[RMDB]
Chemical mapping of a 177-nucleotide RNA with DMS and 2A3.
Reactivities are given for positions 27 through 126.
RNA sequence: GGGAACGACUCGAGUAGAGUCGAAAAGCGCGUAGGUUCAGAUGAUGGGCCCGCAUCUGUACGAAAGUCAGACGAAAGUCCAGCCUACGUGCAUGAGCACGCGGGCCCCGUGCUCUACGGCAAAAGACGGGAGUAUUACUUUCGAGUAAUACUCCCGAAAAGAAACAACAACAACAAC
Reactivity to DMS in 0.01 (KOAc 150mM, MgCl2 10mM, bicine 150mM(pH8.5), 24C), signal-to-noise 3, nucleotides 027 to 126: g000c040g020c000g020u030a030g020g000u010u040c170a090g000a020u010g010a040u020g000g010g000c000c010c010g020c020a020u000c000u000g010u000a020c000g010a120a100a080g010u000c090a090g000a000c000g000a170a060a130g020u000c010c150a140g020c000c010u000a040c040g040u010g000c000a010u020g000a020g000c000a010c050g000c100g020g000g000c040c010c000c020g010u000g000c010u000c010u000a050c170g020g000c170a100a050a120a020g010a160
Reactivity to 2A3 in 0.01 (KOAc 150mM, MgCl2 10mM, bicine 150mM(pH8.5), 24C), signal-to-noise 5, nucleotides 027 to 126: g020c020g000c000g020u000a000g010g040u070u090c100a030g020a080u070g000a020u060g050g010g010c000c000c000g000c000a000u000c000u020g120u160a050c040g120a100a070a050g070u060c010a010g010a020c010g090a100a040a010g010u020c020c020a010g020c000c000u000a000c000g010u000g000c010a010u050g010a000g000c020a010c010g000c020g000g010g000c010c010c000c010g000u010g010c000u000c010u020a050c030g110g020c100a060a050a010a010g120a030